[RMDB]
RNA sequence: GGGAACGACUCGAGUAGAGUCGAAAAGAUUUCACUUAUACCUAUAUGUUUUUUUCUGGCAUCUCUAAUGUUAGGAUGCGAAGUUUAAGUACUCUCCAUUCAAUGAAUACAAUUUUUGACAAUAUCUUCCCUCUAAUUCAUUCGUGAAUUAGAGGGAAAAAGAAACAACAACAACAAC
Reactivity to DMS in 0.01 (KOAc 150mM, MgCl2 10mM, bicine 150mM(pH8.5), 24C), signal-to-noise 1, nucleotides 027 to 126: g000a140u040u010u000c040a030c000u000u000a110u010a120c050c060u000a100u010a060u010g010u010u010u010u010u010u030u010c080u000g020g010c040a020u000c050u060c050u000a050a160u020g000u030u010a060g020g000a000u000g000c160g040a060a020g070u000u000u050a030a140g030u000a080c060u000c080u000c070c010a040u000u010c100a080a130u000g000a060a070u020a150c140a030a060u040u000u000u010u010g020a070c100a060a030u000a020u040c060u000
Reactivity to 2A3 in 0.01 (KOAc 150mM, MgCl2 10mM, bicine 150mM(pH8.5), 24C), signal-to-noise 2, nucleotides 027 to 126: g060a050u120u210u160c000a060c040u050u100a120u170a240c010c010u060a050u030a130u300g300u190u100u020u080u000u040u030c030u010g160g010c010a000u060c080u040c110u170a210a000u190g010u150u040a040g020g000a000u010g010c060g070a100a000g000u000u000u180a040a000g060u010a090c110u000c000u000c080c000a000u130u070c110a000a000u190g040a150a040u120a080c040a000a070u010u000u000u000u300g130a080c100a030a060u000a060u000c000u000

This 177-nucleotide RNA was probed chemically with DMS and 2A3. DMS adducts were read by reverse transcription with MarathonRT. For 2A3, 479 sequencing reads were counted. For 2A3 the reverse transcriptase was SuperScript II with manganese. The RNA was probed in 150 mM KOAc, 10 mM MgCl2 and 150 mM bicine (pH 8.5) at 24 C.